[RMDB]
RNA sequence: GGGAACGACUCGAGUAGAGUCGAAAAGUUGAGAUUAUUUGGUCGGGAUUGUAGUUUGAAGAUGUGCUCUUUUGAGCAGUCUCAACUUUGCUCGUUCCCGUUAUGGGAAAAAUUUUGGAAGGUCUUGACGCAAGUCGGGAUUCGUCCCGACUUGCGUAAAAGAAACAACAACAACAAC
Reactivity to DMS in 0.01 (KOAc 150mM, MgCl2 10mM, bicine 150mM(pH8.5), 24C), signal-to-noise 1, nucleotides 027 to 126: g020u000u000g000a070g000a010u010u000a100u000u000u020g000g030u010c050g030g010g000a100u030u030g000u000a050g000u020u010u000g000a120a210g000a130u000g050u040g030c000u000c000u020u040u020u010g030a050g050c010a070g000u000c000u010c000a000a000c000u000u010u000g000c120u010c090g000u000u000c000c000c000g050u020u070a090u010g000g020g040a040a060a050a040a170u000u010u000u050g020g000a180a100g020g010u020c020u040u000g000